Source: RMDB library 15KREP, as collected in RNAgym. The record gives the reactivity of an RNA of 177 nucleotides to DMS and 2A3.
[RMDB]
RNA sequence: GGGAACGACUCGAGUAGAGUCGAAAACCGACCCGAAGAGGAAAGAAGGACUCGGACGCGAACCCGUGAGUGGAACCUUGGUCUUUUAUUGGGGGGUACACUCGAGGAGUGGAAGGCGGGGAGGCGGCAAGGAGAGUAUGUUCGCAUACUCUCCUUGAAAAGAAACAACAACAACAAC
Reactivity to DMS in 0.01 (KOAc 150mM, MgCl2 10mM, bicine 150mM(pH8.5), 24C), signal-to-noise 3, nucleotides 027 to 126: c020c010g020a160c080c010c010g020a120a120g000a100g000g000a070a090a090g010a090a070g010g000a050c090u000c080g030g010a110c070g000c030g000a110a130c060c030c010g010u000g010a050g010u000g000g000a170a140c020c030u010u030g020g010u000c110u010u000u010u010a080u000u020g010g000g000g000g010g010u000a130c060a030c020u010c010g010a060g000g010a110g030u010g010g000a090a070g000g000c090g040g020g010g020a090g010g010c060g000g010
Reactivity to 2A3 in 0.01 (KOAc 150mM, MgCl2 10mM, bicine 150mM(pH8.5), 24C), signal-to-noise 2, nucleotides 027 to 126: c010c000g020a030c020c000c010g030a070a030g070a040g050g060a160a060a030g040a050a020g030g020a000c010u010c080g040g080a000c040g060c030g070a080a020c010c000c040g050u070g000a010g010u030g030g030a070a020c000c000u030u020g080g020u080c030u040u290u070u110a150u130u120g000g000g010g020g010g020u030a010c020a010c000u010c000g020a050g010g050a030g000u090g030g030a100a060g020g030c010g000g010g020g000a020g000g030c030g020g060
Description: DMS adducts were read by reverse transcription with MarathonRT. The RNA was probed in 150 mM KOAc, 10 mM MgCl2 and 150 mM bicine (pH 8.5) at 24 C. 2A3 adducts were read by reverse transcription with SuperScript II with manganese.